[RMDB]
RNA sequence: GGGAACGACUCGAGUAGAGUCGAAAACUUGGGGCCUUCGGGCCCCAAGAAAGAAAAAGGCAAGGACCAGGCAAAUAAAGGUCCAAAAAGAUCGAAAGAUCAAAACGUAACCGUUCGCGGUUACGAACGAUUAUAAGAGCUUCGGCUCUUAUAAUCGAAAAGAAACAACAACAACAAC
Reactivity to DMS in 0.01 (KOAc 150mM, MgCl2 10mM, bicine 150mM(pH8.5), 24C), signal-to-noise 1, nucleotides 027 to 126: c000u000u000g000g000g000g030c000c000u000u000c170g010g020g010c000c000c000c000a000a000g010a020a070a170g000a080a080a030a130a060g030g000c070a130a070g070g040a010c000c000a060g010g000c080a130a090a060u000a030a030a120g000g000u000c000c000a000a010a020a080a120g000a040u000c000g000a180a110a070g000a010u000c000a130a010a030a150c000g010u000a000a020c010c000g030u000u000c120g000c000g010g000u000u000a000c000g000a060a080
The record gives the reactivity of an RNA of 177 nucleotides to DMS.
Conditions: 150 mM KOAc, 10 mM MgCl2 and 150 mM bicine (pH 8.5), 24 C.
DMS adducts were read by reverse transcription with MarathonRT.